[RMDB]
RNA sequence: GGGAACGACUCGAGUAGAGUCGAAAACGGAAGAGGGCGACUGUAUUGCGUAGCGAGAGGUGAAAGUUGACGACCUACGUAGGACAAACCGAAGCGAAAGCUGUCGUCCAGUACGUUUCCGGUGAUCGUUUUAUACCACCUUCGGGUGGUAUAAAACAAAAGAAACAACAACAACAAC
Reactivity to 2A3 in 0.01 (KOAc 150mM, MgCl2 10mM, bicine 150mM(pH8.5), 24C), signal-to-noise 1, nucleotides 027 to 126: c010g000g020a060a030g050a100g050g040g000c000g030a000c010u020g020u020a050u020u050g000c000g000u000a010g000c000g000a000g020a000g050g010u100g060a080a050a010g100u110u070g090a140c010g020a020c010c000u010a020c010g020u000a000g030g000a000c000a070a070a030c060c100g080a050a000g020c050g020a060a010a010g030c020u000g000u010c000g030u000c000c010a000g010u010a020c050g010u000u020u010c000c010g000g090u120g050a060u130c010
Reactivity to DMS in 0.01 (KOAc 150mM, MgCl2 10mM, bicine 150mM(pH8.5), 24C), signal-to-noise 3, nucleotides 027 to 126: c060g010g000a150a090g000a110g010g020g000c010g010a020c030u010g010u000a080u000u000g000c000g000u000a060g010c000g010a120g020a070g010g010u010g020a090a030a180g010u000u010g000a110c190g010a160c300c010u000a020c020g020u000a050g030g000a050c010a050a060a140c230c170g000a140a090g010c000g010a030a040a180g020c000u010g000u000c030g000u000c000c000a070g010u000a060c100g010u010u010u010c000c000g000g000u010g010a110u020c100